[RMDB]
RNA sequence: GGGAACGACUCGAGUAGAGUCGAAAAGGGCUAGCGAGUGGAUGUUCCACCCCCCAGCGGUGCCGAGUGAGGCCUAUCCCGGGGAUCGGUGAAUCGUCCCGGAAUGGGGACUCCGAGGGCCCCUUCCAGCACGGUAUGUUCGCAUACCGUAAAAGAAACAACAACAACAAC
Reactivity to DMS in 0.01 (KOAc 150mM, MgCl2 10mM, bicine 150mM(pH8.5), 24C), signal-to-noise 9, nucleotides 027 to 129: g000g000g010c040u000a060g000c040g010a030g000u010g000g000a120u040g030u020u010c000c000a080c010c010c000c000c000c010a140g010c110g040g030u000g020c020c010g030a190g000u070g020a050g000g000c020c020u020a030u000c050c010c000g010g020g000g010a070u010c030g050g000u050g030a120a090u050c030g000u050c000c000c000g010g010a000a000u000g030g020g000g010a110c000u030c000c020g020a220g000g000g000c000c020c010c040u050u010c050c030a090g020c300
Reactivity to 2A3 in 0.01 (KOAc 150mM, MgCl2 10mM, bicine 150mM(pH8.5), 24C), signal-to-noise 9, nucleotides 027 to 129: g050g010g010c030u040a020g030c020g030a020g020u050g070g150a170u190g040u040u020c010c000a030c010c000c000c000c000c000a020g050c050g060g020u120g160c010c010g020a040g020u300g030a010g020g050c000c000u020a020u030c010c000c000g000g000g000g010a150u210c060g070g050u180g120a150a110u170c030g040u080c000c000c000g000g030a020a020u060g010g000g010g100a180c000u000c010c010g010a090g010g060g000c020c000c000c000u080u050c040c030a050g050c070
Conditions: 150 mM KOAc, 10 mM MgCl2 and 150 mM bicine (pH 8.5), 24 C. The record gives the reactivity of an RNA of 170 nucleotides to DMS and 2A3. Values cover nucleotides 27 to 129. It was measured as part of the RMDB library 15KLIB. For DMS the reverse transcriptase was MarathonRT. For 2A3 the reverse transcriptase was SuperScript II with manganese.